[RMDB]
RNA sequence: GGGAACGACUCGAGUAGAGUCGAAAAUAACAAUAAGCAGAUUAGCUGUGUUUUCUGUUUAGUAACUAAGCCAUGGUUCUAGGCUCAUAGAAAAUCAAUACUUUCUCACAAAUAUGUACUUUUCCUGCCAAGCAGCCAUCAGAAUUAAAGGAAAAUGCCUUGCACAAAUAUUCGUAUUUGUGCAAGGAAAAGAAACAACAACAACAAC
Reactivity to DMS in 0.01 (KOAc 150mM, MgCl2 10mM, bicine 150mM(pH8.5), 24C), signal-to-noise 2, nucleotides 027 to 156: u020a110a150c060a070a180u010a030a050g010c020a070g000a110u000u000a030g010c010u000g010u020g010u000u000u000u000c000u020g020u000u000u030a090g010u000a080a090c110u010a000a110g040c020c050a090u000g020g010u000u000c050u000a190g000g040c000u010c080a110u000a060g000a090a030a070a090u000c070a030a060u000a050c070u000u000u000c050u000c090a070c020a050a090a080u000a030u000g010u000a060c040u000u020u000u020c020c020u000g000c010c060a080a070g020c080a030g020c020c030a020u000c060a130g000a040a090u010u010a040a100a060g040g010a030a050a140a120u010g000
Reactivity to 2A3 in 0.01 (KOAc 150mM, MgCl2 10mM, bicine 150mM(pH8.5), 24C), signal-to-noise 2, nucleotides 027 to 156: u050a020a030c030a030a050u070a140a020g000c000a000g030a050u070u060a030g040c070u050g020u020g000u070u040u060u000c000u000g010u010u060u000a070g020u090a050a070c040u030a000a080g020c000c010a050u040g020g060u050u010c030u070a060g010g000c000u000c030a090u070a050g070a020a130a010a040u080c050a050a040u030a200c040u080u090u040c030u010c040a040c040a050a160a040u140a080u150g060u050a050c000u030u040u000u000c000c030u020g000c010c010a040a000g010c010a010g010c020c020a040u020c020a040g060a120a090u120u120a050a190a040g010g000a040a060a000a040u040g020